Source information
Chemical mapping of a 177-nucleotide RNA with 2A3 and DMS. Conditions: 150 mM KOAc, 10 mM MgCl2 and 150 mM bicine (pH 8.5), 24 C. DMS adducts were read by reverse transcription with MarathonRT. For 2A3, 1,046 sequencing reads were counted.
[RMDB]
RNA sequence: GGGAACGACUCGAGUAGAGUCGAAAAAGUGUGUACGUCAUGCUAGACAUGCACCAUGGGAUCGCCAUGCUCGUACGAUCCUAGGAUCAUGAUCCAUGGGUACCUAGACGCGAUCGAGUACAUGUGCUGCAUUGCUCCCUUUCGAGGGAGCAAUGCAAAAAGAAACAACAACAACAAC
Reactivity to 2A3 in 0.01 (KOAc 150mM, MgCl2 10mM, bicine 150mM(pH8.5), 24C), signal-to-noise 1, nucleotides 027 to 126: a000g130u100g000u000g000u030a020c020g060u020c020a030u110g110c100u130a000g020a010c020a020u070g000c010a010c010c000a040u170g080g000g000a100u020c010g020c030c060a090u140g050c050u050c190g050u190a130c010g040a040u020c040c000u030a060g000g040a040u000c000a040u080g110a210u060c090c000a010u040g000g080g000u060a170c040c010u060a000g010a010c000g050c010g080a050u020c030g000a020g020u030a110c040a080u190g040u080g000c000
Reactivity to DMS in 0.01 (KOAc 150mM, MgCl2 10mM, bicine 150mM(pH8.5), 24C), signal-to-noise 1, nucleotides 027 to 126: a130g000u020g030u000g010u010a030c070g000u010c010a060u030g040c290u020a130g000a090c010a070u000g030c140a020c030c010a020u010g000g000g000a040u010c060g000c090c040a030u000g000c260u000c040g020u010a130c070g000a050u000c090c000u010a070g010g010a040u000c010a050u000g000a180u030c090c010a000u000g000g000g020u000a110c030c020u010a030g030a050c050g020c070g000a190u000c020g000a140g040u000a030c070a080u000g010u000g020c090